[RMDB]
Source: RMDB library OK2TRN, as collected in RNAgym. Structure probing data (DMS and 2A3) for a 177-nucleotide construct. For DMS, 2,055 sequencing reads were counted. For 2A3 the reverse transcriptase was SuperScript II with manganese. The RNA was probed in 150 mM KOAc, 10 mM MgCl2 and 150 mM bicine (pH 8.5) at 24 C.
RNA sequence: GGGAACGACUCGAGUAGAGUCGAAAAGUCGUAGAGCCCUUGCUGCUUGUCGGCGAUCCAGCGUGCUGCCCGGGUCGCUCCGCCGGCGAAGGUCAUGCGGCUGGAGGCCUGGUGGGCGAUCUCUACCUGCCGAGUAUAUGUUCGCAUAUACUCGGCAAAAAGAAACAACAACAACAAC
Reactivity to DMS in 0.01 (KOAc 150mM, MgCl2 10mM, bicine 150mM(pH8.5), 24C), signal-to-noise 2, nucleotides 027 to 126: g010u010c050g040u000a120g010a100g010c060c020c100u010u010g000c060u000g000c060u010u000g020u010c060g040g020c050g010a060u000c050c030a160g010c010g020u000g000c060u000g010c010c030c050g030g000g030u000c000g020c020u000c040c030g010c040c030g000g010c010g000a300a180g000g010u010c060a120u000g020c160g010g000c000u000g010g000a300g020g000c000c010u000g060g010u010g000g020g000c020g010a040u000c020u000c080u000a110c070c100
Reactivity to 2A3 in 0.01 (KOAc 150mM, MgCl2 10mM, bicine 150mM(pH8.5), 24C), signal-to-noise 2, nucleotides 027 to 126: g050u020c000g020u030a020g010a080g070c000c000c010u010u070g050c070u070g020c010u060u200g090u160c030g010g000c030g020a060u060c020c000a020g000c000g140u120g040c060u080g010c020c020c000g050g000g010u020c050g010c000u050c030c020g010c020c000g030g000c000g010a020a040g050g000u050c040a120u230g210c140g080g010c000u030g000g050a120g150g090c000c110u100g020g010u000g000g000g000c010g010a020u000c010u050c000u030a060c010c000